[RMDB]
RNA sequence: GGGAACGACUCGAGUAGAGUCGAAAACGUGUGCCUAUGCAUUCAUAAUGGAGAGAGAUGAUAAAGGUUCUCAGUUGCAUUAAAACUAAACACAAUAUAGGCAGCUGCUGUGAGCUAGACUAUUAUAGACUAUGAACGUGUUCGCACGUUCAUAGUCAAAAGAAACAACAACAACAAC
Reactivity to 2A3 in 0.01 (KOAc 150mM, MgCl2 10mM, bicine 150mM(pH8.5), 24C), signal-to-noise 4, nucleotides 027 to 126: c040g050u030g020u030g070c020c020u030a060u130g020c010a030u020u070c000a010u030a240a090u140g050g000a040g000a000g000a010g010a100u110g010a040u130a150a160a040g120g030u040u020c020u000c010a010g020u020u020g000c010a030u120u100a060a070a030a050c060u120a030a120a010c080a020c030a130a040u150a000u010a090g040g030c010a010g000c020u030g000c010u040g040u040g080a000g010c010u040a030g020a120c010u020a010u210u050a110u110a060
Reactivity to DMS in 0.01 (KOAc 150mM, MgCl2 10mM, bicine 150mM(pH8.5), 24C), signal-to-noise 3, nucleotides 027 to 126: c100g010u010g030u000g020c010c010u000a030u020g010c090a030u000u010c090a140u010a100a060u010g000g000a100g000a090g000a120g060a040u000g000a130u000a090a100a060g000g000u000u020c010u000c000a060g030u000u000g000c030a040u020u030a030a070a070a110c140u010a030a100a030c130a060c170a080a080u020a060u000a060g000g020c010a040g010c010u000g010c100u000g010u010g000a050g010c020u010a060g000a100c080u000a030u020u010a150u000a160